An RNA of 177 nucleotides, treated with DMS and read out base by base. For DMS the reverse transcriptase was MarathonRT. Reactivities are given for positions 27 through 126. Conditions: 150 mM KOAc, 10 mM MgCl2 and 150 mM bicine (pH 8.5), 24 C.
[RMDB]
RNA sequence: GGGAACGACUCGAGUAGAGUCGAAAAUGCAUGACCCCCGGGCAAUCUGGGUAUCUGACGACGGACUCGUGUAACCCAUGAUCGUAACGGUAGAACAGGUUAGGACGUGGCUAGGGCUGCCGGCAUCUAGGCUCCCGUAAUUCGUUACGGGAGCCUAAAAAGAAACAACAACAACAAC
Reactivity to DMS in 0.01 (KOAc 150mM, MgCl2 10mM, bicine 150mM(pH8.5), 24C), signal-to-noise 1, nucleotides 027 to 126: u000g000c070a060u000g030a160c170c110c010c030c000g000g000g010c170a080a030u000c010u000g020g030g020u000a040u000c060u010g030a100c110g010a010c110g030g030a240c080u000c000g000u010g000u000a100a100c090c050c020a050u010g000a010u010c070g000u030a090a090c070g000g000u030a050g030a100a120c090a140g000g020u010u000a120g010g010a080c100g000u000g040g030c050u010a120g020g020g010c020u000g010c050c010g010g000c050a040u000c120